Notes
Source: RMDB library OK1LIB, as collected in RNAgym. Chemical mapping of a 177-nucleotide RNA with 2A3 and DMS. The reactions ran in a buffer of 150 mM KOAc, 10 mM MgCl2 and 150 mM bicine (pH 8.5), at 24 C.
RNA sequence: GGGAACGACUCGAGUAGAGUCGAAAACGUCCCUGAGUUCUACAAUGCCAGGGGGGACCUUAACAUCCGAGACCUCCGUGCCCACGUCAAGGCCCGGAUGAUCUCGUCCCAGUUUUGCGGCUACAUCAAAUAUAUCCGGGUUCGCCCGGAUAUAUUUAAAAGAAACAACAACAACAAC
Reactivity to 2A3 in 0.01 (KOAc 150mM, MgCl2 10mM, bicine 150mM(pH8.5), 24C), signal-to-noise 4, nucleotides 027 to 126: c040g180u090c000c010c000u010g050a100g070u060u020c030u070a080c070a130a130u130g020c060c010a050g060g000g000g000g030g010a030c000c070u090u110a070a080c060a100u030c070c050g010a010g010a030c000c000u000c010c010g030u020g010c010c010c000a170c070g130u120c130a080a050g000g000c010c060c010g010g000a010u020g010a090u000c000u000c000g030u020c000c000c000a020g020u020u020u090u070g120c070g020g050c040u060a030c000a110u140c060
Reactivity to DMS in 0.01 (KOAc 150mM, MgCl2 10mM, bicine 150mM(pH8.5), 24C), signal-to-noise 5, nucleotides 027 to 126: c250g000u010c000c000c020u010g000a150g000u010u020c050u030a130c210a100a060u010g010c010c010a100g010g000g000g000g000g000a080c070c060u030u010a050a070c160a070u010c080c000g000a030g000a040c020c040u000c030c010g020u000g000c030c000c060a130c180g010u030c270a180a090g000g000c010c030c010g000g000a000u010g010a040u010c000u010c060g000u000c000c000c020a100g000u020u010u000u020g010c110g000g000c040u010a070c110a080u020c130